[RMDB]
RNA sequence: GGGAACGACUCGAGUAGAGUCGAAAAUGGACUUUUUACAGUUCCUACUUAUCCGGUUUUAACGCUGUUUUAUUGGCGCAAAGGUUUACGGAUAAACAACUAAUAAUUAAACCUUAUGUGUGCGAAAAUUGGACGUUUAGGUUCGCCUAAACGUCAAACAUAUUAAUAGGUUCGCCUAUUAAUAUGUAAAAGAAACAACAACAACAAC
Reactivity to DMS in 0.01 (KOAc 150mM, MgCl2 10mM, bicine 150mM(pH8.5), 24C), signal-to-noise 2, nucleotides 027 to 156: u010g000g010a100c020u030u000u010u010u000a060c100a090g030u010u000c010c040u000a080c080u010u000a010u000c020c000g000g030u010u000u000u000a260a070c010g020c010u000g010u000u000u000u010a170u050u010g010g020c000g020c020a040a040a020g050g000u000u000u000a150c000g000g010a040u010a010a050a150c070a070a160c080u000a100a140u000a140a180u000u000a010a020a010c010c000u000u000a110u000g020u000g010u000g000c000g000a030a060a090a190u010u000g020g010a020c000g030u000u010u000a010g030g020u000u010c300g030c010c000u010a000a010a000c000g010u000c010a010a040
Reactivity to 2A3 in 0.01 (KOAc 150mM, MgCl2 10mM, bicine 150mM(pH8.5), 24C), signal-to-noise 4, nucleotides 027 to 156: u110g020g020a020c030u090u090u040u110u240a110c160a040g010u090u080c010c000u010a050c030u050u030a000u000c000c000g030g010u010u020u000u040a070a020c040g000c010u030g160u120u130u130u160a120u160u300g030g000c010g000c030a030a000a000g010g000u000u000u020a010c000g000g020a010u020a020a100a010c040a030a010c070u130a050a160u100a160a030u170u140a010a010a010c010c000u050u030a120u130g100u010g030u030g030c060g100a020a030a060a140u140u130g110g010a000c000g000u000u000u000a000g000g010u030u030c110g090c010c000u000a000a000a000c000g010u000c000a010a000